Annotation
Structure probing data (2A3 and DMS) for a 177-nucleotide construct. It was measured as part of the RMDB library RFMREP. Reactivities are given for positions 27 through 126. Conditions: 150 mM KOAc, 10 mM MgCl2 and 150 mM bicine (pH 8.5), 24 C. 2A3 adducts were read by reverse transcription with SuperScript II with manganese. The 2A3 profile rests on 1,184 reads.
RNA sequence: GGGAACGACUCGAGUAGAGUCGAAAAAUCGCGUAGGUCGGCGUUCUGUUCGGGUGGAAGCACGGGUGAGAACUCGUGUGGACCGUUCAGUAACGAAAAUCCUGGUCAUAGUAGCAGCGUUAGUCGGACUCUUAUCUUCCUUCGGGAAGAUAAGAGUAAAAGAAACAACAACAACAAC
Reactivity to 2A3 in 0.01 (KOAc 150mM, MgCl2 10mM, bicine 150mM(pH8.5), 24C), signal-to-noise 1, nucleotides 027 to 126: a000u030c050g030c020g040u080a050g000g100u090c040g000g000c000g020u000u000c010u000g000u030u010c030g000g010g050u300g070g010a030a000g000c030a010c000g010g000g000u000g040a040g000a020a020c000u000c030g010u010g000u020g000g030a030c010c000g010u020u000c000a030g000u070a020a020c020g070a050a020a010a060u090c020c020u030g000g000u070c010a020u000a180g060u060a020g090c060a000g020c020g020u070u050a050g050u090c050g000g050
Reactivity to DMS in 0.01 (KOAc 150mM, MgCl2 10mM, bicine 150mM(pH8.5), 24C), signal-to-noise 2, nucleotides 027 to 126: a080u000c040g010c050g010u010a060g000g040u010c060g000g030c020g020u000u000c010u010g000u000u000c000g020g010g000u000g050g000a150a230g010c020a010c000g000g010g020u020g000a190g010a160a020c000u000c010g010u000g010u000g000g000a050c000c010g020u000u000c020a000g000u000a010a000c020g000a030a050a070a100u000c020c020u000g020g010u000c030a060u000a070g020u000a100g000c040a050g020c050g010u010u010a070g020u000c070g000g010